The record gives the reactivity of an RNA of 177 nucleotides to DMS. Conditions: 150 mM KOAc, 10 mM MgCl2 and 150 mM bicine (pH 8.5), 24 C. It was measured as part of the RMDB library 15KREP.
RNA sequence: GGGAACGACUCGAGUAGAGUCGAAAACCAAGAAGCAGUUAGGACUGCUCCAACCUACUGACAAUUCUACAACUGUUAGUGUUACUGUAUCCAGUAACAUGGUUGAAACUGUUGUGGGUCAACUUGACUUAAAAAACUGGUUCGCCAGUUUUUUAAGAAAAGAAACAACAACAACAAC
Reactivity to DMS in 0.01 (KOAc 150mM, MgCl2 10mM, bicine 150mM(pH8.5), 24C), signal-to-noise 2, nucleotides 027 to 126: c000c000a150a150g010a080a050g020c000a000g000u000u020a090g040g030a280c010u000g010c000u000c050c010a100a050c050c030u000a050c150u000g010a030c040a080a150u000u010c060u000a060c030a010a000c010u010g020u000u000a050g030u000g000u000u000a010c000u000g000u000a160u000c270c010a020g010u000a010a000c000a000u000g000g020u010u010g010a070a170a030c040u000g010u010u000g010u000g000g000g000u010c080a060a120c080u040u000g000a260